[RMDB]
RNA sequence: GGGAACGACUCGAGUAGAGUCGAAAAUGUGGAUAUAUGCAAAGCAGCAAUAGGUCUGAGGAUCAGUUCUUCCUUUAGCUUUGGAGGCUUCACUUUCAAAAGAACAAGUGGAUCAUCCGUCAAGAAGGAAGAGGAAGUGCUUACAGGCAACCUCCAAGUACAGCCCAUGAUUCGUCAUGGGCUGUACAAAAGAAACAACAACAACAAC
Reactivity to 2A3 in 0.01 (KOAc 150mM, MgCl2 10mM, bicine 150mM(pH8.5), 24C), signal-to-noise 1, nucleotides 027 to 156: u160g020u070g010g020a000u020a010u020a000u230g110c110a180a090a050g020c030a000g000c010a000a100u070a130g080g000u030c070u040g070a060g110g010a000u030c030a080g080u050u000c000u000u040c000c000u060u090u060a080g020c030u090u160u090g000g000a000g000g040c030u030u000c000a000c000u010u090u130c110a210a160a070a030g100a090a100c050a100a020g000u010g020g000a000u010c010a090u010c040c000g090u130c040a020a070g010a020a030g100g000a020a030g000a000g020g010a080a000g020u000g030c010u020u040a050c020a030g040g030c020a010a060c020c000u000c030c000a030a000